[RMDB]
Structure probing data (2A3 and DMS) for a 177-nucleotide construct. The DMS profile rests on 1,857 reads.
RNA sequence: GGGAACGACUCGAGUAGAGUCGAAAAGAUAUGGAGAGUGGCUCGAAGAACUUGCGUAACAUCACUCGGAAACGAGUGUGGCAAGGGAGAGCGCUCCUAAGUCAAAACGAGAUCUUCGGAUCUCGAACAGAUAAGCUGUCUUCGGACAGCUUAUCUGAAAAGAAACAACAACAACAAC
Reactivity to 2A3 in 0.01 (KOAc 150mM, MgCl2 10mM, bicine 150mM(pH8.5), 24C), signal-to-noise 2, nucleotides 027 to 126: g030a020u110a040u200g030g020a080g000a020g230u300g190g020c010u030c030g090a210a010g000a060a040c000u000u020g010c030g120u200a120a030c040a150u250c010a010c020u010c000g010g010a060a080a010c010g000a020g000u000g020u030g030g050c000a010a010g000g000g000a050g010a000g000c000g020c000u000c000c000u070a180a030g060u030c030a020a030a030a110c030g000a000g010a010u000c010u070u120c300g100g010a000u010c000u010c000g020a030a020
Reactivity to DMS in 0.01 (KOAc 150mM, MgCl2 10mM, bicine 150mM(pH8.5), 24C), signal-to-noise 2, nucleotides 027 to 126: g000a030u000a280u000g000g000a040g020a040g030u010g030g000c010u000c000g020a160a170g020a120a180c010u000u000g000c000g000u000a150a140c160a030u030c010a000c010u010c000g020g000a100a060a150c010g010a010g000u010g070u010g000g020c000a000a000g030g000g000a090g000a020g000c010g000c000u000c000c000u000a040a150g000u010c040a040a060a070a160c040g000a000g000a020u000c000u000u000c200g000g010a010u000c000u000c000g000a070a120
Record summary:
The RNA was probed in 150 mM KOAc, 10 mM MgCl2 and 150 mM bicine (pH 8.5) at 24 C. DMS adducts were read by reverse transcription with MarathonRT. For 2A3, 2,479 sequencing reads were counted.